The data come from the RNA Mapping Database (RMDB), library OK1LIB. The record gives the reactivity of an RNA of 177 nucleotides to 2A3 and DMS. For DMS the reverse transcriptase was MarathonRT. For 2A3, 1,121 sequencing reads were counted.

[RMDB]
RNA sequence: GGGAACGACUCGAGUAGAGUCGAAAAUAACAAUUUGAAACGUUUAACAGGUGUUAAUAAAAACAUUUCUGAAUCUAAUUUCAAAGAUGUCGUCGGUUUGAAAAUGCGUCAAAAUGGACAUGAAGCAGCCAAAUUGAAUUUUCGAAUUCAAUUUGGCAAAAGAAACAACAACAACAAC
Reactivity to 2A3 in 0.01 (KOAc 150mM, MgCl2 10mM, bicine 150mM(pH8.5), 24C), signal-to-noise 3, nucleotides 027 to 126: u180a010a010c080a030a090u030u000u010g020a010a030a010c050g010u030u040u120a170a050c040a040g000g020u000g020u030u070a200a170u150a300a300a020a000a000c030a000u140u230u040c010u020g020a020a010u000c000u060a100a040u070u030u000c020a020a090a000g050a200u200g000u050c030g000u000c060g060g040u020u000u010g110a120a040a000a000u100g050c010g000u020c040a060a040a090a300u130g050g010a000c020a050u130g070a090a060g030c100a000
Reactivity to DMS in 0.01 (KOAc 150mM, MgCl2 10mM, bicine 150mM(pH8.5), 24C), signal-to-noise 2, nucleotides 027 to 126: u080a130a060c070a020a170u020u010u000g000a030a080a050c070g000u050u010u040a110a170c000a000g070g030u000g000u000u000a030a110u010a120a020a220a010a020c000a000u000u050u040c040u000g030a170a000u000c080u000a230a090u000u000u000c000a030a040a040g000a120u000g010u040c050g060u010c030g000g000u070u030u000g000a020a020a010a010u020g030c140g010u000c090a050a110a080a200u040g000g010a050c180a040u040g000a040a130g010c070a050